[RMDB]
RNA sequence: GGGAACGACUCGAGUAGAGUCGAAAAAUAGUGAUUAUGCAGCUAAGGGUUACAUUGCUGGAAUACAGAAUUUUAAGGAAACGCUGUAUUAUCAGAACAAUGUCUUUAUGUCUGAAGCUAAAUGCUGGUAGACUGCACUUCGGUGCAGUCAAAAGAAACAACAACAACAAC
Reactivity to 2A3 in 0.01 (KOAc 150mM, MgCl2 10mM, bicine 150mM(pH8.5), 24C), signal-to-noise 4, nucleotides 027 to 129: a000u180a040g070u040g050a030u060u070a050u160g050c000a020g000c020u040a010a060g070g020g020u060u050a000c000a010u000u000g020c000u000g010g020a000a000u000a000c010a000g050a070a110u110u010u050u120a200a120g180g080a090a030a020c100g000c010u020g040u000a010u010u020a070u040c000a000g010a040a040c010a030a000u000g030u020c020u100u170u100a050u070g050u000c020u010g020a000a000g000c020u100a100a060a020u170g050c030u010g000g000u020a040
Reactivity to DMS in 0.01 (KOAc 150mM, MgCl2 10mM, bicine 150mM(pH8.5), 24C), signal-to-noise 3, nucleotides 027 to 129: a000u060a070g040u020g000a070u010u040a000u030g040c050a050g040c090u030a010a120g000g000g000u040u010a040c040a030u000u000g030c020u010g000g040a000a040u000a000c030a040g040a030a080u000u000u000u000a150a300g080g000a040a030a040c300g030c000u000g010u010a040u010u030a090u000c010a010g010a180a100c050a010a020u020g000u020c140u040u070u030a000u050g040u020c040u040g030a070a020g010c040u020a070a050a070u050g000c020u000g020g030u010a100

Chemical mapping of a 170-nucleotide RNA with 2A3 and DMS. 2A3 adducts were read by reverse transcription with SuperScript II with manganese. DMS adducts were read by reverse transcription with MarathonRT. In probing experiments dimethyl sulfate is read out at A N1 and C N3, which are open when not base-paired. The 2A3 profile rests on 5,883 reads.